RNA sequence: GGGAACGACUCGAGUAGAGUCGAAAAUUCAUCUUUUUUAUUCUUUAUCCUAACUCCUCUUAUUAGCUUCAGACUUGCUCAAUUACUGGCAGGGCAUGGUCACUCAUGCUGUAAUCCUAGCUCUUUGGGAAGCCGAGUGGGAAGAUUGCUUGAGCCCCAUAACACCUUCGUUCGCGAAGGUGUUAUGAAAAGAAACAACAACAACAAC
Reactivity to 2A3 in 0.01 (KOAc 150mM, MgCl2 10mM, bicine 150mM(pH8.5), 24C), signal-to-noise 2, nucleotides 027 to 156: u040u020c010a020u060c030u090u120u100u100u150u220a150u250u120c110u090u270u140a220u150c030c020u080a070a040c020u050c020c040u040c020u090u040a160u050u070a070g010c010u040u020c040a050g030a140c040u000u030g020c040u040c100a000a190u110u090a070c050u030g020g010c010a000g030g020g000c000a040u030g020g000u060c020a030c060u100c000a000u030g000c000u030g060u020a030a030u020c000c000u010a000g020c010u020c020u110u160u040g040g010g000a050a000g080c070c070g020a010g000u010g000g010g000a020a020g020a020u000u120g010c010u050u000g020a020g030c000c010c010